[RMDB]
RNA sequence: GGGAACGACUCGAGUAGAGUCGAAAAACGAAACCCAAGGUGCAUGCCGAGGUGCGGUAGGCCUCGUUAACAAACCGCAAAAAAAUAGUCGCAAACGACGAAAACUACGCACUCGCAUCUUAAUAACAGUAGGGUCCCUACUUCGGUAGGGACCCAAGAAAUAGAUGUGAUUCGUCACAUCUAUUUCAAAAGAAACAACAACAACAAC
Reactivity to 2A3 in 0.01 (KOAc 150mM, MgCl2 10mM, bicine 150mM(pH8.5), 24C), signal-to-noise 3, nucleotides 027 to 156: a010c080g050a070a000a010c010c010c000a000a020g030g000u020g010c000a020u020g030c030c000g020a030g000g000u010g000c010g000g020u030a040g050g050c010c010u020c010g130u080u000a030a030c030a030a010a010c020c010g000c000a040a120a030a000a000a030a180u160a030g000u010c020g010c070a070a130a160c040g030a000c020g070a000a060a050a020c080u190a070c030g010c030a010c030u090c080g000c000a020u000c000u060u140a140a100u130a180a060c050a060g120u210a110g010g000g000u000c000c000c000u000a010c000u020u060c090g060g010u000a000g000g000g000a000c000c010c000a000a000
Reactivity to DMS in 0.01 (KOAc 150mM, MgCl2 10mM, bicine 150mM(pH8.5), 24C), signal-to-noise 2, nucleotides 027 to 156: a260c110g020a140a060a220c010c020c010a140a160g030g050u000g000c050a070u010g010c150c020g010a090g000g030u000g030c010g000g010u000a070g010g040c010c010u000c030g000u000u030a050a130c070a100a060a070c050c080g000c080a000a000a040a100a070a130a290u000a100g020u000c020g040c100a110a160a140c030g000a020c030g000a060a050a040a110c010u000a010c010g010c010a040c060u000c040g020c020a050u000c040u030u000a050a110u000a050a080c100a180g020u000a140g010g020g030u000c000c000c010u000a010c020u010u020c210g030g000u000a000g000g000g000a000c010c000c000a010a040

Description: Structure probing data (2A3 and DMS) for a 207-nucleotide construct. The 2A3 profile rests on 2,441 reads. DMS adducts were read by reverse transcription with MarathonRT. For 2A3 the reverse transcriptase was SuperScript II with manganese. Source: RMDB library M2RFPK, as collected in RNAgym. The DMS profile rests on 3,461 reads. Reactivities are given for positions 27 through 156.